[RMDB]
RNA sequence: GGGAACGACUCGAGUAGAGUCGAAAACGGACCGGCUCAUCUCGACAAGAGGCGGCGGACCUCAGUGCUCUUACUCUUUUCUGUAAAGAGGAGACUGCUGGUCCCGCCGCCCGAGUUCGAGCAUGAGCCAAUUCCGAGCGAAGGGGGCGCGGGAGGAGGUUAGCUAUGUCUUCGGACAUAGCUAACCAAAAGAAACAACAACAACAAC
Reactivity to 2A3 in 0.01 (KOAc 150mM, MgCl2 10mM, bicine 150mM(pH8.5), 24C), signal-to-noise 1, nucleotides 027 to 156: c040g010g020a030c060c000g000g000c000u010c000a000u000c010u000c020g010a020c010a100a110g070a120g080g020c000g000g020c000g000g000a000c000c000u020c000a080g020u180g260c010u040c000u070u300a300c000u030c000u010u060u140u160c200u300g300u300a020a000a000g000a010g020g000a000g000a000c010u010g060c080u030g000g000u030c060c060c000g000c000c000g000c000c000c000g000a000g000u070u020c000g000a010g000c040a020u010g010a000g010c010c000a000a000u000u000c000c000g000a000g010c110g130a070a010g000g000g000g020g000c040g000c050g040g000g010a050g050g010a040